Source information
Conditions: 150 mM KOAc, 10 mM MgCl2 and 150 mM bicine (pH 8.5), 24 C. The record gives the reactivity of an RNA of 177 nucleotides to 2A3 and DMS. For 2A3, 465 sequencing reads were counted.
RNA sequence: GGGAACGACUCGAGUAGAGUCGAAAACAGAACUCAUCGACGGGUUCAACUGGUUGUCCGUCCACCCUGAUUCCCGUUCGAGGUCUCGAAGAGAUCCACAUCUGCUUGCAUUUAUCAGGGCGUAGGCAAUGACGACCCACUUCGGUGGGUCGUCAUUAAAAGAAACAACAACAACAAC
Reactivity to 2A3 in 0.01 (KOAc 150mM, MgCl2 10mM, bicine 150mM(pH8.5), 24C), signal-to-noise 2, nucleotides 027 to 126: c070a000g030a110a000c010u000c010a040u250c290g130a180c080g000g000g040u090u040c090a050a020c050u110g150g000u070u010g010u120c020c010g020u000c020c000a050c110c000c010u020g010a020u140u160c070c000c040g100u150u200c040g000a100g000g080u090c060u000c050g170a300a100g120a000g000a040u020c030c000a050c000a090u090c030u040g060c060u020u050g010c000a190u120u040u000a060u070c010a020g000g010g000c040g110u000a050g010g000c000
Reactivity to DMS in 0.01 (KOAc 150mM, MgCl2 10mM, bicine 150mM(pH8.5), 24C), signal-to-noise 1, nucleotides 027 to 126: c160a040g020a020a040c040u000c040a030u040c200g010a060c290g000g000g000u030u000c190a230a140c060u000g020g010u020u000g000u000c010c020g030u040c130c040a140c000c030c000u000g000a140u020u000c000c000c010g070u020u000c080g010a300g030g000u000c060u000c020g000a050a060g000a020g000a070u000c020c020a000c160a070u050c040u030g000c000u000u000g040c040a100u000u070u000a080u000c000a030g010g000g170c260g030u020a050g000g030c010